This 177-nucleotide RNA was probed chemically with DMS and 2A3. The DMS profile rests on 1,329 reads. The 2A3 profile rests on 631 reads. The RNA was probed in 150 mM KOAc, 10 mM MgCl2 and 150 mM bicine (pH 8.5) at 24 C. It was measured as part of the RMDB library OK1LIB. For DMS the reverse transcriptase was MarathonRT.

RNA sequence: GGGAACGACUCGAGUAGAGUCGAAAAUGGAUCUCACGUGUAUUUGUAGCCCAUGUUAAAGGAGUAGUGGUUCAGCGAAGAGCUGUCGUUGCACAUCACCCGAUGGCUUAGCAUGUACUGGCCGCAGCAGGGUGAUCCCUUUCGAGGGAUCACCCUGAAAAGAAACAACAACAACAAC
Reactivity to DMS in 0.01 (KOAc 150mM, MgCl2 10mM, bicine 150mM(pH8.5), 24C), signal-to-noise 1, nucleotides 027 to 126: u060g040g000a080u000c010u000c020a090c150g060u000g030u000a120u050u000u000g000u000a130g000c010c000c040a120u080g010u050u030a070a070a090g000g010a030g010u000a090g020u000g000g000u040u040c010a000g000c050g010a220a120g040a090g010c080u000g070u010c060g050u000u000g000c110a020c120a010u010c120a110c000c110c030g000a000u000g000g010c020u000u000a050g010c180a060u000g030u020a070c070u000g010g020c000c000g030c130a050g020
Reactivity to 2A3 in 0.01 (KOAc 150mM, MgCl2 10mM, bicine 150mM(pH8.5), 24C), signal-to-noise 2, nucleotides 027 to 126: u080g030g000a020u010c060u020c100a020c120g090u080g020u070a190u120u120u110g000u000a000g000c000c000c160a080u130g050u080u150a120a080a000g060g100a130g110u200a080g010u040g060g020u200u200c000a030g000c020g100a030a000g040a020g130c040u060g070u010c000g020u020u140g000c090a060c020a100u150c000a000c040c010c030g080a050u050g030g000c020u020u110a010g110c000a080u010g010u120a070c070u040g000g000c020c000g050c000a010g000